Description: The record gives the reactivity of an RNA of 177 nucleotides to 2A3 and DMS. The 2A3 profile rests on 1,054 reads. It was measured as part of the RMDB library OK2TRN. 2A3 adducts were read by reverse transcription with SuperScript II with manganese.
RNA sequence: GGGAACGACUCGAGUAGAGUCGAAAAAGGGCCCGCACCGUUGCUGGUGUCUCUAUUCUCAGUACUAUGACUGGCAGAAUGUUUCAUCAAAAGUGUCUAAAGAGUAUAGCAGCUACUCGCGGUGUUCGCGAGCUAGCACAUUCGUGUGCUAGCUCGCAAAAGAAACAACAACAACAAC
Reactivity to 2A3 in 0.01 (KOAc 150mM, MgCl2 10mM, bicine 150mM(pH8.5), 24C), signal-to-noise 1, nucleotides 027 to 126: a000g080g020g070c000c000c000g000c000a000c000c000g000u090u200g040c080u070g010g110u010g000u020c010u000c000u030a050u020u000c020u050c040a050g030u050a050c130u150a070u280g140a030c030u020g020g040c040a010g030a190a050u020g030u040u090u020c010a050u000c020a000a050a050a050g080u050g050u000c000u070a160a120a040g060a000g010u040a020u060a110g100c070a010g020c010u000a040c000u010c010g030c020g000g010u030g030u060u060c010
Reactivity to DMS in 0.01 (KOAc 150mM, MgCl2 10mM, bicine 150mM(pH8.5), 24C), signal-to-noise 1, nucleotides 027 to 126: a050g010g000g020c220c010c080g000c020a040c050c030g030u030u000g060c180u000g010g010u000g000u020c060u010c030u000a050u000u000c020u010c020a080g010u000a090c150u010a060u010g010a050c060u000g020g000c160a070g000a060a040u010g010u010u010u030c010a050u000c030a070a070a090a110g000u000g010u000c070u000a050a090a080g030a040g000u000a030u010a050g020c150a100g000c110u010a020c080u000c030g150c050g000g000u010g000u000u000c150